[RMDB]
RNA sequence: GGGAACGACUCGAGUAGAGUCGAAAAUGUAGACUAGCAGUAUCCUUUCAUCUGCUUUGUUGUGAGCCAGCUUAGGUGGUCUUUUCUCUGCUAUUAAAGGGGAAUUCUGACUCCUUGAGUUGAUGAGAUGGAGUUUGGGAGGCAGAUAGGCCUUGAAACUCCUAAUGGCUUUCGAGCCAUUAGGAGUAAAAGAAACAACAACAACAAC
Reactivity to 2A3 in 0.01 (KOAc 150mM, MgCl2 10mM, bicine 150mM(pH8.5), 24C), signal-to-noise 1, nucleotides 027 to 156: u090g020u060a000g030a120c030u020a030g030c000a000g000u180a070u110c010c080u040u160u100c020a030u000c000u030g050c000u030u090u110g010u030u000g010u010g020a030g000c000c010a020g050c030u040u040a040g050g010u060g030g020u070c000u030u080u030u000c000u000c010u070g040c040u070a080u200u180a300a040a020g000g010g020g000a020a010u160u170c070u090g030a040c020u030c000c030u030u020g000a000g020u070u020g080a130u140g030a080g020a070u060g020g050a020g000u030u070u000g010g050g000a020g000g000c050a000g020a030u050a010g120g000c010c000u000u040g040a180a060
Reactivity to DMS in 0.01 (KOAc 150mM, MgCl2 10mM, bicine 150mM(pH8.5), 24C), signal-to-noise 2, nucleotides 027 to 156: u010g030u000a110g000a090c060u010a060g030c020a060g010u010a060u010c050c000u000u000u000c070a120u010c020u010g010c000u000u000u000g020u010u010g050u000g000a150g020c050c000a050g030c050u010u000a070g030g050u000g020g000u010c040u010u020u000u000c040u000c010u000g010c080u000a190u010u020a090a080a100g040g020g000g000a120a130u010u010c080u000g010a040c000u010c140c020u000u000g000a070g020u000u000g000a110u000g010a110g040a110u010g020g010a090g030u000u010u010g020g020g000a050g010g030c030a060g000a090u000a080g030g020c020c010u010u000g000a130a130